An RNA of 177 nucleotides, treated with DMS and 2A3 and read out base by base.

RNA sequence: GGGAACGACUCGAGUAGAGUCGAAAAGAUGAUUAAAGAGCUAGCAAUGGUGAAUUCGAUGAAUUUGUUCGCGUGCCGCUGGGUGCGCAGCAGUGGUGAUAUGCAUUCUUACGCAGUUCAUCUGAGGGUUCCUAAGAUUGUUCGCAAUCUUAGGAACAAAAGAAACAACAACAACAAC
Reactivity to DMS in 0.01 (KOAc 150mM, MgCl2 10mM, bicine 150mM(pH8.5), 24C), signal-to-noise 7, nucleotides 027 to 126: g010a060u020g000a070u000u030a050a090a080g010a110g020c060u010a060g000c070a060a080u010g000g020u010g010a060a050u020u000c030g010a090u020g010a070a060u020u010u010g020u000u010c170g020c040g020u000g020c010c010g040c180u030g020g020g050u000g010c020g030c020a020g000c010a040g000u010g010g010u030g010a070u020a070u000g020c060a070u010u020c070u010u010a110c150g010c040a030g010u000u000c050a020u000c010u000g000a090g000g000
Reactivity to 2A3 in 0.01 (KOAc 150mM, MgCl2 10mM, bicine 150mM(pH8.5), 24C), signal-to-noise 9, nucleotides 027 to 126: g030a030u150g000a010u080u130a150a070a040g080a020g050c060u080a010g020c050a090a080u110g030g030u070g060a090a090u090u050c050g050a050u100g040a060a090u080u070u090g050u060u070c080g000c010g020u020g000c000c040g080c190u190g180g000g010u030g000c020g000c010a000g000c000a000g020u090g030g030u050g030a050u040a030u200g030c030a030u080u080c020u090u020a040c080g000c030a030g000u020u020c010a030u000c040u060g050a060g050g100
For DMS the reverse transcriptase was MarathonRT. The data come from the RNA Mapping Database (RMDB), libraries RFM100 and RFMREP. Conditions: 150 mM KOAc, 10 mM MgCl2 and 150 mM bicine (pH 8.5), 24 C.